[RMDB]
RNA sequence: GGGAACGACUCGAGUAGAGUCGAAAAUAGUCGUACUCACACACAGUUGCAACAAGUCACAGACGAGUUGCGCCGGACCGUCUUUUGUCAGAAUCUUGUCCGACGGCGUUCAUGCAACUCUGUUGAAUCGACCGUAAUACUUCGGUAUUACGGUCGAAAAAGAAACAACAACAACAAC
Reactivity to 2A3 in 0.01 (KOAc 150mM, MgCl2 10mM, bicine 150mM(pH8.5), 24C), signal-to-noise 1, nucleotides 027 to 126: u150a020g020u020c010g000u030a040c010u030c030a010c000a010c000a000c000a060g000u020u020g030c010a030a030c000a040a010g050u040c040a060c060a210g040a010c000g050a060g090u010u020g030c040g000c000c000g010g010a040c050c000g060u020c010u030u240u180u220g180u090c030a080g020a160a140u080c000u070u110g050u050c030c020g020a010c000g020g020c000g030u070u010c020a030u030g060c000a000a020c010u000c020u060g080u060u120g050a040a060
Reactivity to DMS in 0.01 (KOAc 150mM, MgCl2 10mM, bicine 150mM(pH8.5), 24C), signal-to-noise 1, nucleotides 027 to 126: u010a030g020u020c060g000u010a090c030u000c030a140c130a080c050a030c110a020g000u000u010g000c020a150a000c060a030a080g020u000c070a120c120a140g000a040c060g010a120g020u010u000g010c000g020c130c070g000g010a010c030c140g010u000c020u050u000u010u010g050u000c140a170g000a060a110u010c100u020u000g010u010c130c100g000a060c020g000g000c020g040u000u000c020a180u010g020c030a020a020c000u030c060u020g020u000u000g020a070a170

Structure probing data (2A3 and DMS) for a 177-nucleotide construct. The DMS profile rests on 847 reads.